[RMDB]
RNA sequence: GGGAACGACUCGAGUAGAGUCGAAAACUGUUGGGAGACCCUGGUCUGCACUCUGUCUGGAAACUUACAGAAGGGAGAGCAGGGCAGGGUUUCCCAUACAGAGAAAAGGAACGCGUUCGCGCGUUCCGUUACUUCAUGGCUUCGGCCAUGAAGUAACAAAAGAAACAACAACAACAAC
Reactivity to DMS in 0.01 (KOAc 150mM, MgCl2 10mM, bicine 150mM(pH8.5), 24C), signal-to-noise 1, nucleotides 027 to 126: c010u000g000u010u000g000g000g020a010g020a010c000c000c010u000g010g000u000c000u010g000c000a070c010u000c000u010g000u000c000u000g000g000a130a130a130c300u010u000a080c000a010g010a050a050g000g000g000a040g030a090g030c010a020g000g000g000c010a010g010g020g000u000u000u000c000c000c000a000u010a010c000a010g010a150g000a060a080a070a190g020g000a020a000c000g030c000g010u000u000c180g030c010g000c010g000u000u000c000c000